[RMDB]
RNA sequence: GGGAACGACUCGAGUAGAGUCGAAAAGAUAUGGAAGCGUUGGACAUGAAGGAUAAGGGUCGGAAACGACCCGUAACUUCAACAGCCACCGCUUCCUAAGUCAAAUCUGACGCUUCGGCGUCAGAAACCGUAAAUCUUAGUUCGCUAAGAUUUACGGAAAAGAAACAACAACAACAAC
Reactivity to 2A3 in 0.01 (KOAc 150mM, MgCl2 10mM, bicine 150mM(pH8.5), 24C), signal-to-noise 2, nucleotides 027 to 126: g010a030u070a040u110g000g010a000a010g000c010g000u010u010g000g010a080c090a240u160g010a020a010g030g000a000u010a040a050g010g020g000u000c010g010g010a010a080a070c010g000a010c000c000c000g000u000a000a000c000u010u000c000a020a010c040a000g030c000c000a010c000c000g000c000u000u000c000c000u000a040a000g000u000c010a000a030a190u000c000u000g000a000c010g000c000u030u070c300g160g000c010g000u000c000a000g000a030a000a010
Reactivity to DMS in 0.01 (KOAc 150mM, MgCl2 10mM, bicine 150mM(pH8.5), 24C), signal-to-noise 5, nucleotides 027 to 126: g010a060u000a300u000g000g010a000a000g010c000g020u000u000g010g000a030c070a270u000g000a020a000g000g020a110u020a120a190g000g000g010u000c000g010g010a100a080a210c010g000a010c000c000c000g000u000a040a210c000u000u010c000a020a070c250a170g010c010c000a010c040c000g010c000u000u000c000c010u000a010a050g020u000c060a090a120a160u010c000u000g010a020c010g010c000u010u010c190g010g000c000g000u000c000a000g000a010a080a120